[RMDB]
RNA sequence: GGGAACGACUCGAGUAGAGUCGAAAAGAGUUGCUGGUGCGGCCGGUGGAGGCCUAUGACACUGCCCCGCUCAAAAGUAAGGUGAAGCGCCGCAAUUGGGGCAACAAGGGCAAUACGACCAACCACCCGCGCAGCAAGGUGGACGGCGCAGAGGGAGUCAACAGGAAAAUUUCGAUUUUCCUGUUGAAAAAGAAACAACAACAACAAC
Reactivity to 2A3 in 0.01 (KOAc 150mM, MgCl2 10mM, bicine 150mM(pH8.5), 24C), signal-to-noise 1, nucleotides 027 to 156: g100a000g080u040u050g040c060u110g010g220u070g020c030g030g010c190c170g010g000u010g000g010a080g040g100c030c010u030a070u170g000a060c010a000c150u020g000c000c020c000c000g080c040u100c040a160a280a000a080g040u120a050a130g080g020u040g090a200a100g090c000g050c110c000g000c060a010a010u040u080g020g000g010g000c020a010a000c010a000a090g000g000g080c000a020a090u170a170c120g030a070c020c000a060a000c040c000a020c020c070c060g000c050g000c030a000g020c040a010a010g060g020u030g040g040a080c020g000g010c000g000c030a040g030a010g040g000g030a040g040
Overview
An RNA of 207 nucleotides, treated with 2A3 and read out base by base. Source: RMDB library OK3TST, as collected in RNAgym. For 2A3, 423 sequencing reads were counted. For 2A3 the reverse transcriptase was SuperScript II with manganese. Conditions: 150 mM KOAc, 10 mM MgCl2 and 150 mM bicine (pH 8.5), 24 C.